Chemical mapping of a 207-nucleotide RNA with 2A3 and DMS.
It was measured as part of the RMDB library OK3TST.
For DMS, 2,894 sequencing reads were counted.
For 2A3 the reverse transcriptase was SuperScript II with manganese.
[RMDB]
RNA sequence: GGGAACGACUCGAGUAGAGUCGAAAAAGUAGAGAUAGAAUUUCACCAUGUGGGCCAGGCUGGUCUUGGACUCCUGAGCUCAAGUGAUCCGCAUGCCUCGGCCUUCCGAAGUGCUGAGAUUAUAGUUGUAAACCACUGGUACCCAGCUGAACUCAAACUCCUGAUUAGUAUUCGUACUAAUCAGGAGAAAAGAAACAACAACAACAAC
Reactivity to 2A3 in 0.01 (KOAc 150mM, MgCl2 10mM, bicine 150mM(pH8.5), 24C), signal-to-noise 3, nucleotides 027 to 156: a040g070u090a000g030a050g030a140u070a070g170a090a160u090u120u020c030a040c040c020a070u210g020u070g040g010g020c040c050a020g000g020c070u110g030g010u080c070u080u080g030g010a010c030u050c020c030u070g060a050g040c030u030c030a020a040g030u020g030a080u040c020c000g030c050a030u090g030c000c010u010c060g030g000c000c020u050u040c010c010g060a130a020g030u040g020c020u030g000a030g000a090u040u070a050u070a120g030u030u020g060u050a080a100a050c010c020a020c070u030g030g020u080a090c020c010c010a000g010c080u050g040a030a020c030u080c140a140a030a070
Reactivity to DMS in 0.01 (KOAc 150mM, MgCl2 10mM, bicine 150mM(pH8.5), 24C), signal-to-noise 1, nucleotides 027 to 156: a110g010u000a080g010a090g030a200u000a100g030a020a300u010u000u000c060a040c020c010a080u010g010u020g020g010g000c010c000a080g020g040c030u010g000g010u000c030u010u020g030g000a040c000u010c030c030u010g020a150g040c000u010c030a060a030g030u000g010a060u000c000c070g010c120a070u010g020c020c020u000c010g040g000c050c010u000u040c110c080g000a060a100g000u010g030c050u010g000a080g030a080u010u010a050u000a090g000u020u010g010u000a080a010a060c030c000a050c000u010g020g030u000a060c020c010c010a080g000c020u000g000a100a170c040u000c030a060a130a180